[RMDB]
This 177-nucleotide RNA was probed chemically with DMS and 2A3. 2A3 adducts were read by reverse transcription with SuperScript II with manganese.
RNA sequence: GGGAACGACUCGAGUAGAGUCGAAAAGAUAUGGAUCCAUUACCAGCCGAUAAGCUGAUGGUCGGAAACGACCACAGCUUUUGACGGCUGAAUGGAUCCUAAGUCAAAAGUGCCGUUCGCGGCACAAGAUUAUCCCGUUGUUCGCAACGGGAUAAUCAAAAGAAACAACAACAACAAC
Reactivity to DMS in 0.01 (KOAc 150mM, MgCl2 10mM, bicine 150mM(pH8.5), 24C), signal-to-noise 3, nucleotides 027 to 126: g010a050u010a280u010g000g000a010u000c000c000a000u000u010a190c300c040a010g000c010c000g030a180u010a020a020g010c000u000g000a150u010g000g030u000c000g010g010a060a040a130c010g010a020c000c000a030c000a000g000c000u010u000u010u000g020a100c090g010g010c000u010g000a020a000u000g000g010a010u010c000c000u000a000a070g000u010c030a130a070a130a130g000u000g010c010c000g030u000u020c230g020c020g020g030c000a010c010a030a030
Reactivity to 2A3 in 0.01 (KOAc 150mM, MgCl2 10mM, bicine 150mM(pH8.5), 24C), signal-to-noise 2, nucleotides 027 to 126: g040a020u030a020u050g010g000a010u010c010c000a020u020u020a270c210c000a010g020c040c060g300a130u130a280a000g020c000u070g050a300u040g300g000u000c000g010g000a020a030a020c020g000a010c000c000a000c000a000g000c020u000u010u020u010g030a010c000g020g000c000u000g000a010a000u010g020g000a000u000c000c010u000a000a010g000u010c020a070a000a090a170g000u010g000c000c000g030u060u120c300g000c020g100g000c010a000c000a000a000
It was measured as part of the RMDB library TTRDES. DMS adducts were read by reverse transcription with MarathonRT.